The record gives the reactivity of an RNA of 177 nucleotides to DMS and 2A3.
The DMS profile rests on 4,255 reads.
For DMS the reverse transcriptase was MarathonRT.
The 2A3 profile rests on 8,819 reads.
RNA sequence: GGGAACGACUCGAGUAGAGUCGAAAAGAUAUGGAUCGUUGGUAGACAUGUCGGGCAGGGUCGGAAACGACCCGAUGCGACAACAGCUACCACCGAUCCUAAGUCAAAACGCAUCUUCGGAUGCGAACUCUUAAAGGCUGUUCGCAGCCUUUAAGAGAAAAGAAACAACAACAACAAC
Reactivity to DMS in 0.01 (KOAc 150mM, MgCl2 10mM, bicine 150mM(pH8.5), 24C), signal-to-noise 4, nucleotides 027 to 126: g020a040u000a300u000g010g020a000u000c010g030u000u010g010g010u000a000g000a070c110a220u000g020u000c000g020g020g020c180a300g010g010g020u000c000g000g000a090a080a200c010g040a010c000c000c000g010a030u020g010c000g030a020c020a020a060c300a180g010c000u000a000c000c000a020c020c010g010a010u010c000c010u000a020a070g010u010c030a090a050a090a210c010g030c000a010u000c010u010u010c200g030g000a020u000g000c010g010a030a100
Reactivity to 2A3 in 0.01 (KOAc 150mM, MgCl2 10mM, bicine 150mM(pH8.5), 24C), signal-to-noise 3, nucleotides 027 to 126: g020a010u070a040u160g000g000a000u010c000g000u010u030g000g010u020a020g050a120c120a190u130g000u020c010g020g120g050c130a090g020g000g000u010c010g020g040a100a040a080c020g010a000c050c030c010g000a010u060g100c020g000a000c000a060a030c110a020g030c010u010a000c000c010a000c000c000g000a000u000c000c000u000a010a000g030u000c030a030a010a100a150c010g000c010a020u000c000u070u090c300g190g010a010u010g000c000g020a030a010